[RMDB]
RNA sequence: GGGAACGACUCGAGUAGAGUCGAAAAGCUGCGGCUAACCAAAGGCAGCGAAGACAUCUCGGUGCCAACACGGCGAGUUGUCGAUUAGCAGCUUGACCGCCGUGAGGAACUCGGUCUUGCUGCGAAAGGGAAGCAGCUCGUUCGCGAGUUGCUUCCCAAAAGAAACAACAACAACAAC
Reactivity to 2A3 in 0.01 (KOAc 150mM, MgCl2 10mM, bicine 150mM(pH8.5), 24C), signal-to-noise 3, nucleotides 027 to 126: g000c000u020g000c020g160g050c050u070a070a040c050c040a050a020a000g090g000c010a000g020c010g010a050a020g020a020c030a070u020c000u000c060g070g130u060g060c020c020a050a020c040a010c090g000g080c010g000a020g030u000u030g040u000c000g000a010u000u050a030g020c000a000g000c000u000u000g010a000c000c000g000c010c020g050u040g010a060g030g110a010a010c010u020c060g000g010u000c000u000u010g010c000u000g000c000g020a040a010a010
Reactivity to DMS in 0.01 (KOAc 150mM, MgCl2 10mM, bicine 150mM(pH8.5), 24C), signal-to-noise 3, nucleotides 027 to 126: g010c000u000g010c010g030g000c100u000a090a080c200c050a070a060a110g010g000c000a010g020c010g000a120a120g000a010c090a040u040c030u000c010g000g010u000g010c070c100a040a160c180a120c050g000g000c020g000a030g030u000u000g000u000c010g000a120u100u010a050g010c000a000g000c000u010u000g000a010c020c000g000c040c060g000u030g000a260g020g010a220a040c140u050c070g020g000u010c020u000u000g030c010u000g000c010g000a020a110a020